RNA sequence: GGGAACGACUCGAGUAGAGUCGAAAAGAUAUGGAAGCCGGUAAUACUGCUACCCACCCCUUUCGGAAACGAAAGAAGGAGGCAGUGCCAGGCUUCCUAAGUCAAAAUCCGGAGUUCGCUCCGGAAACGUUACACUAUACUUCGGUAUAGUGUAACGAAAAGAAACAACAACAACAAC
Reactivity to 2A3 in 0.01 (KOAc 150mM, MgCl2 10mM, bicine 150mM(pH8.5), 24C), signal-to-noise 2, nucleotides 027 to 126: g000a030u050a060u170g010g010a000a020g000c020c060g010g050u070a210a080u100a300c010u000g020c030u090a170c010c030c010a090c020c050c000c010u000u000u020c000g020g000a050a060a070c010g020a010a020a010g020a030a040g010g010a010g010g000c020a010g000u000g020c010c030a050g010g010c000u000u000c000c000u010a010a010g000u000c030a010a010a030a300u000c010c000g020g010a020g020u130u170c270g030c150u000c020c000g000g000a020a010a000
Reactivity to DMS in 0.01 (KOAc 150mM, MgCl2 10mM, bicine 150mM(pH8.5), 24C), signal-to-noise 4, nucleotides 027 to 126: g010a080u010a300u000g000g050a020a010g020c000c020g000g010u000a120a100u000a210c010u010g010c010u010a160c110c020c030a160c200c150c260c000u000u010u000c000g010g000a070a100a150c010g010a000a010a010g000a090a070g010g020a300g000g000c000a010g000u000g010c010c010a100g040g000c000u000u000c010c000u000a020a110g010u010c040a040a100a100a160u000c010c000g010g000a030g010u000u010c220g070c000u000c000c000g000g010a000a020a060

Structure probing data (2A3 and DMS) for a 177-nucleotide construct. The RNA was probed in 150 mM KOAc, 10 mM MgCl2 and 150 mM bicine (pH 8.5) at 24 C. Values cover nucleotides 27 to 126. The 2A3 profile rests on 4,903 reads. For 2A3 the reverse transcriptase was SuperScript II with manganese.